RNA sequence: GGGAACGACUCGAGUAGAGUCGAAAAGAUAUGGAAACUGUACAGGGAGCUCCCACUCGGAAACGAGUGGCGAGCAUCGAUCUGUACUGGUUUCCUAAGUCAAAAGUGUCAGCGUUCGCGCUGACACGAGAGGGUGAUAGUUCGCUAUCACCCUCUCAAAAGAAACAACAACAACAAC
Reactivity to 2A3 in 0.01 (KOAc 150mM, MgCl2 10mM, bicine 150mM(pH8.5), 24C), signal-to-noise 2, nucleotides 027 to 126: g010a000u030a010u060g000g000a010a000a000c020u030g000u010a000c000a030g070g080g150a050g040c010u000c000c000c000a010c000u000c000g000g020a030a030a010c000g000a010g020u010g020g000c040g000a000g000c000a010u020c010g020a170u000c000u000g000u000a000c000u010g010g000u000u010u000c000c000u010a070a010g030u000c030a020a040a110a200g000u010g010u000c000a000g000c010g050u100u220c300g010c010g000c140u010g010a000c000a000c010
Reactivity to DMS in 0.01 (KOAc 150mM, MgCl2 10mM, bicine 150mM(pH8.5), 24C), signal-to-noise 3, nucleotides 027 to 126: g000a020u000a270u000g000g000a030a010a020c010u010g000u000a000c000a010g020g000g020a090g010c000u010c010c010c000a010c000u000c010g000g000a080a060a100c000g010a030g010u000g000g010c240g020a010g020c010a040u000c180g010a070u020c000u010g010u000a000c000u000g000g000u000u000u000c000c000u000a010a110g010u000c030a090a070a110a220g010u000g010u000c000a010g010c000g020u000u020c300g010c010g000c010u000g000a000c000a000c010